[RMDB]
RNA sequence: GGGAACGACUCGAGUAGAGUCGAAAACACACAAGGUUCGCCUUGUGUGCAACAAUAGACGAAUACUACCGUAGAAGUAUUCAGGUCACAUAACUACGGAAAUGGCGUUCUGCUUCGGCAGAACGAAGGCGUCAGGUGAUUUCGAUCACCUGACGCCAAAAGAAACAACAACAACAAC
Reactivity to 2A3 in 0.01 (KOAc 150mM, MgCl2 10mM, bicine 150mM(pH8.5), 24C), signal-to-noise 1, nucleotides 027 to 126: c000a000c000a000c000a050a010g090g000u070u050c190g080c040c000u000u020g000u000g000u000g050c000a030a050c020a070a010u150a030g100a000c050g020a030a000u010a020c000u100a300c020c000g050u030a020g040a110a000g000u010a020u000u020c000a020g190g000u140c060a060c010a260u220a250a140c000u010a020c020g020g130a000a050a030u150g120g020c050g000u030u000c000u010g000c000u030u020c120g100g000c000a020g000a010a000c000g000a000a010
Chemical mapping of a 177-nucleotide RNA with 2A3. The reactions ran in a buffer of 150 mM KOAc, 10 mM MgCl2 and 150 mM bicine (pH 8.5), at 24 C. Values are in units of 0.01, from 0 to 300, in steps of 10. 2A3 adducts were read by reverse transcription with SuperScript II with manganese. For 2A3, 1,127 sequencing reads were counted.